Record summary: Structure probing data (DMS and 2A3) for a 170-nucleotide construct. For DMS the reverse transcriptase was MarathonRT. For 2A3, 28,268 sequencing reads were counted. The reactions ran in a buffer of 150 mM KOAc, 10 mM MgCl2 and 150 mM bicine (pH 8.5), at 24 C. 2A3 adducts were read by reverse transcription with SuperScript II with manganese.
RNA sequence: GGGAACGACUCGAGUAGAGUCGAAAAUUUAACGCUGAGGGUGAUGCAUCCUGGUCUUCUACUAUGAUCUUCUCUCUUCACCCCGUCGAGUGUGACGAGGAGUGUUCUGAAGUAGAGGCUUCAGAUUAUACCACUUCGUUCGCGAAGUGGAAAAGAAACAACAACAACAAC
Reactivity to DMS in 0.01 (KOAc 150mM, MgCl2 10mM, bicine 150mM(pH8.5), 24C), signal-to-noise 8, nucleotides 027 to 129: u010u010u010a110a060c140g040c070u000g020a060g010g000g070u020g010a080u000g010c110a020u030c030c020u000g000g000u000c000u040u020c040u060a020c070u010a120u020g020a050u010c010u010u010c010u010c020u010c050u000u000c080a080c020c010c020c010g040u050c130g020a120g030u030g010u010g000a050c070g000a040g000g000a060g020u070g030u000u000c020u020g010a040a020g000u000a050g030a090g020g020c050u010u020c050a050g010a040u010u000a080u040a130
Reactivity to 2A3 in 0.01 (KOAc 150mM, MgCl2 10mM, bicine 150mM(pH8.5), 24C), signal-to-noise 9, nucleotides 027 to 129: u060u050u060a100a020c050g010c050u030g060a030g030g030g020u050g030a090u090g040c020a040u060c000c010u010g020g000u010c020u090u010c010u050a070c010u020a050u110g030a040u010c010u080u010c060u010c000u000c000u070u050c010a030c010c040c020c010g140u090c060g010a210g050u110g020u100g080a020c020g000a060g030g000a080g020u070g040u050u020c010u020g030a040a010g000u060a050g010a030g110g000c000u020u010c010a000g000a020u080u040a070u090a080